[RMDB]
Annotation: This 177-nucleotide RNA was probed chemically with 2A3. The RNA was probed in 150 mM KOAc, 10 mM MgCl2 and 150 mM bicine (pH 8.5) at 24 C. 2A3 adducts were read by reverse transcription with SuperScript II with manganese. The data come from the RNA Mapping Database (RMDB), library OK1LIB.
RNA sequence: GGGAACGACUCGAGUAGAGUCGAAAAGCUUCUAUAUUGUACAGAUUGUUAAUUUAGCUGUAAUGGAAAUUUCAUCUUCAAAUUAACAAAUUAGGUUUUCUUGAGUUUAUUAACUUAUUUGUAGAUGCGGUAUCAGCACUUUCGAGUGCUGAUACCGAAAAGAAACAACAACAACAAC
Reactivity to 2A3 in 0.01 (KOAc 150mM, MgCl2 10mM, bicine 150mM(pH8.5), 24C), signal-to-noise 1, nucleotides 027 to 126: g010c000u090u090c000u090a280u080a090u080u230g030u180a080c000a160g150a180u050u050g010u000u000a030a030u000u000u130a040g000c030u000g010u130a030a020u040g040g130a260a300a000u010u140u000c030a010u090c000u030u000c000a000a080a070u020u150a010a010c000a000a040a110u050u030a110g140g000u180u040u140u000c190u150u060g050a080g030u110u210u010a160u270u180a000a000c010u000u090a000u300u080u090g040u060a040g000a080u040g000